[RMDB]
RNA sequence: GGGAACGACUCGAGUAGAGUCGAAAACAGUGAUGGAAACAUCACUGAAAAACCGGAAACGGACAUGACGUUCGCGCGCAUGUCGGGAAACCGUAAACGCGAAAAGAGCUAGCGAAAGCUAGCUCAAGAGGAUUUAGGCGUUCGCGCCUAAAUCCUCAAAAGAAACAACAACAACAAC
Reactivity to 2A3 in 0.01 (KOAc 150mM, MgCl2 10mM, bicine 150mM(pH8.5), 24C), signal-to-noise 1, nucleotides 027 to 126: c000a000g000u000g000a000u020g000g030a010a070a000c000a000u010c000a010c000u000g000a000a000a000a000a000c020c010g060g070a100a060a030c040g100g000a000c000a000u050g050a080c020g090u100u040c030g030c000g000c000g030c020a040u010g010u000c030g000g010g030a050a040a020c010c000g020u120a050a150a020c030g000c010g020a000a010a040a100g000a000g000c020u000a000g020c040g000a100a020a000g000c000u000a010g010c010u000c000a000a000
Chemical mapping of a 177-nucleotide RNA with 2A3. The RNA was probed in 150 mM KOAc, 10 mM MgCl2 and 150 mM bicine (pH 8.5) at 24 C. Source: RMDB library OK1LIB, as collected in RNAgym.